[RMDB]
RNA sequence: GGGAACGACUCGAGUAGAGUCGAAAAGAUAUGGAGCCUCACGGGAGCGAUAUAAGGGUCGGAAACGACCCUAUCGCGAAGAACGUGGGCUCCUAAGUCAAAAUCUCGGAUGUUCGCAUCCGAGAAACAUACGUACGACGUUCGCGUCGUACGUAUGAAAAGAAACAACAACAACAAC
Reactivity to DMS in 0.01 (KOAc 150mM, MgCl2 10mM, bicine 150mM(pH8.5), 24C), signal-to-noise 3, nucleotides 027 to 126: g020a010u000a150u000g010g010a020g010c000c010u010c020a010c000g060g050g000a020g040c000g020a000u000a050u020a300a170g020g000g020u010c000g040g000a030a020a080c000g000a000c000c000c000u000a000u000c000g080c010g010a090a170g000a100a220c010g000u000g000g000g010c000u030c000c000u000a000a050g010u000c000a120a110a170a130u010c000u000c010g000g000a020u010g010u000u050c300g000c000a000u000c000c000g000a030g010a020a060a120
Reactivity to 2A3 in 0.01 (KOAc 150mM, MgCl2 10mM, bicine 150mM(pH8.5), 24C), signal-to-noise 2, nucleotides 027 to 126: g010a000u020a020u100g020g000a010g020c020c030u280c020a010c010g000g000g000a040g000c000g000a010u000a000u060a250a260g000g000g000u000c000g030g020a050a000a000c000g000a000c000c020c000u000a000u000c010g000c000g070a120a020g000a010a000c010g000u020g020g000g000c000u000c000c000u000a000a000g000u010c000a030a110a200a300u030c000u000c000g020g010a010u010g080u140u170c300g000c180a010u000c000c000g000a000g010a000a010a000
An RNA of 177 nucleotides, treated with DMS and 2A3 and read out base by base. The 2A3 profile rests on 4,397 reads. The DMS profile rests on 2,675 reads. 2A3 adducts were read by reverse transcription with SuperScript II with manganese. The RNA was probed in 150 mM KOAc, 10 mM MgCl2 and 150 mM bicine (pH 8.5) at 24 C. Source: RMDB library TTRDES, as collected in RNAgym.